[RMDB]
This 177-nucleotide RNA was probed chemically with DMS and 2A3. Conditions: 150 mM KOAc, 10 mM MgCl2 and 150 mM bicine (pH 8.5), 24 C. DMS (dimethyl sulfate) methylates the pairing face of unpaired adenines and cytosines. Values are in units of 0.01, from 0 to 300, in steps of 10. DMS adducts were read by reverse transcription with MarathonRT. 2A3 adducts were read by reverse transcription with SuperScript II with manganese.
RNA sequence: GGGAACGACUCGAGUAGAGUCGAAAAGCUUGAAGGAGCCUCUUUGCCCCUUCUGCCAUGUGAGGACAUAGCAACAAGAUACUAUCUAUGGAAGCAGAGAAUGAGCCCUCACCAGACACCGAAUCUGCUUAUAGCAUCAAUUCGUUGAUGCUAUAAGAAAAGAAACAACAACAACAAC
Reactivity to DMS in 0.01 (KOAc 150mM, MgCl2 10mM, bicine 150mM(pH8.5), 24C), signal-to-noise 9, nucleotides 027 to 126: g010c050u000u000g010a050a040g020g010a040g020c010c300u010c190u010u010u000g010c020c010c010c020u010u000c010u000g000c010c060a070u000g020u000g010a050g010g010a060c040a070u000a070g010c070a070a180c100a070a070g000a100u010a100c170u000a060u000c040u000a080u010g000g010a100a130g010c020a060g010a090g000a090a100u000g000a130g010c060c010c010u000c030a030c050c110a080g010a070c090a110c090c050g000a090a120u010c050u000g010
Reactivity to 2A3 in 0.01 (KOAc 150mM, MgCl2 10mM, bicine 150mM(pH8.5), 24C), signal-to-noise 9, nucleotides 027 to 126: g010c020u100u110g020a020a010g040g010a030g000c030c030u150c110u180u190u270g010c020c020c000c010u000u020c020u020g000c020c010a090u110g000u020g030a020g000g020a010c010a040u080a020g030c020a020a080c010a060a040g030a070u190a280c100u150a100u120c010u030a210u070g050g010a130a040g000c030a010g060a010g070a250a110u100g020a040g060c010c010c000u000c000a010c010c000a030g030a060c020a020c100c030g030a050a080u020c010u060g020